[RMDB]
RNA sequence: GGGAACGACUCGAGUAGAGUCGAAAAUGACCUGCAUUCCAAAACGCAAAAAAAGUGAGAGGCCCUAGGGGCUUCUCGGCUCGUCGUCGACGAAGGGUCUAGAAGCCUGGGCGCUGGCUGGAGCGCGCCUAUUUUGUUUCUUCGGAAACAAAAUAGGAAAAGAAACAACAACAACAAC
Reactivity to DMS in 0.01 (KOAc 150mM, MgCl2 10mM, bicine 150mM(pH8.5), 24C), signal-to-noise 2, nucleotides 027 to 126: u010g010a110c030c020u000g010c110a120u000u010c020c050a100a100a140a090c030g000c050a000a010a140a110a110a160a050g010u000g010a060g000a080g010g010c000c000c000u020a100g000g000g010g000c000u010u000c000u000c020g010g000c020u000c030g010u000c000g010u020c160g000a160c130g020a040a060g010g000g000u000c000u000a040g000a070a060g010c010c020u000g020g000g000c040g030c000u000g010g010c060u000g000g000a090g030c040g030c070g030
Chemical mapping of a 177-nucleotide RNA with DMS. It was measured as part of the RMDB library VIROID. Values cover nucleotides 27 to 126. The reactions ran in a buffer of 150 mM KOAc, 10 mM MgCl2 and 150 mM bicine (pH 8.5), at 24 C.